[RMDB]
RNA sequence: GGGAACGACUCGAGUAGAGUCGAAAAUAGUUCGGAUCGUCUUUAUAAAGAUUAACACCUUCUUCAACGAACAUAACAAGCUUAGGGAAAAUAGGAGUUAUCCCAUCACGACCAAGACCUUUAAUACCAAUCGGUAAGACUUCGGUCUUACCGAUUGAAAAGAAACAACAACAACAAC
Reactivity to 2A3 in 0.01 (KOAc 150mM, MgCl2 10mM, bicine 150mM(pH8.5), 24C), signal-to-noise 2, nucleotides 027 to 126: u040a020g020u000u020c050g040g010a110u030c030g070u010c050u030u160u000a210u140a140a120a000g030a020u060u130a040a010c010a070c010c010u030u060c020u110u060c050a050a040c020g040a030a010c020a080u120a050a070c060a100a040g050c050u080u070a050g020g050g000a050a070a050a060u140a060g060g010a040g010u050u030a020u050c000c020c040a010u030c020a010c080g050a000c030c030a010a010g060a100c030c030u150u150u130a200a020u210a130c120
Reactivity to DMS in 0.01 (KOAc 150mM, MgCl2 10mM, bicine 150mM(pH8.5), 24C), signal-to-noise 2, nucleotides 027 to 126: u020a050g000u020u000c070g010g030a100u000c080g010u020c040u000u000u000a110u000a050a070a050g010a040u010u010a050a060c060a080c020c000u010u000c030u000u000c120a060a090c050g030a040a050c070a050u000a130a070c190a160a060g000c070u000u000a060g000g000g010a050a070a070a040u000a070g010g000a100g020u000u000a060u000c060c040c000a100u020c060a060c080g010a050c030c030a020a090g000a080c090c030u000u010u010a070a070u000a070c170